[RMDB]
Chemical mapping of a 170-nucleotide RNA with DMS and 2A3. As a SHAPE reagent, 2A3 marks flexible, mostly unpaired nucleotides at the ribose 2'-OH. DMS adducts were read by reverse transcription with MarathonRT. Values are in units of 0.01, from 0 to 300, in steps of 10. The data come from the RNA Mapping Database (RMDB), library 15KLIB. The reactions ran in a buffer of 150 mM KOAc, 10 mM MgCl2 and 150 mM bicine (pH 8.5), at 24 C. For DMS, 11,067 sequencing reads were counted.

RNA sequence: GGGAACGACUCGAGUAGAGUCGAAAAGAGAAGGGAGGGUCGGAUGGGAAGAGUAAAUCCUACGGGAAUCCCCCGGUUCCCCUUAUGUCCAGCCCCUCCCCGGUCCGAGAGAAGGGGGACUCCGGGAAUGCCGUGUGGUUCGCCACACGGAAAAGAAACAACAACAACAAC
Reactivity to DMS in 0.01 (KOAc 150mM, MgCl2 10mM, bicine 150mM(pH8.5), 24C), signal-to-noise 3, nucleotides 027 to 129: g010a090g000a110a060g030g020g030a090g020g020g020u010c000g010g010a020u000g010g030g000a070a030g030a050g000u000a050a110a080u050c000c000u000a130c010g080g000g000a050a060u010c060c000c030c060c100g050g060u020u000c010c010c000c210u010u050a090u000g030u000c020c000a120g050c000c000c000c050u000c030c010c000c000g010g050u000c050c040g040a100g000a080g000a090a050g020g020g020g020g010a020c020u070c030c080g010g030g070a160a080u060g060
Reactivity to 2A3 in 0.01 (KOAc 150mM, MgCl2 10mM, bicine 150mM(pH8.5), 24C), signal-to-noise 3, nucleotides 027 to 129: g110a010g020a070a030g030g010g010a040g000g020g020u010c040g040g030a080u100g060g000g040a010a000g040a010g060u140a000a040a040u000c000c000u040a020c080g010g000g000a010a060u070c010c000c010c000c000g010g000u010u000c000c010c000c000u080u170a110u300g060u000c000c020a030g030c000c000c000c000u030c030c000c010c000g030g000u010c030c000g070a080g010a000g000a070a090g020g000g000g020g020a010c000u000c000c000g010g010g020a060a020u140g020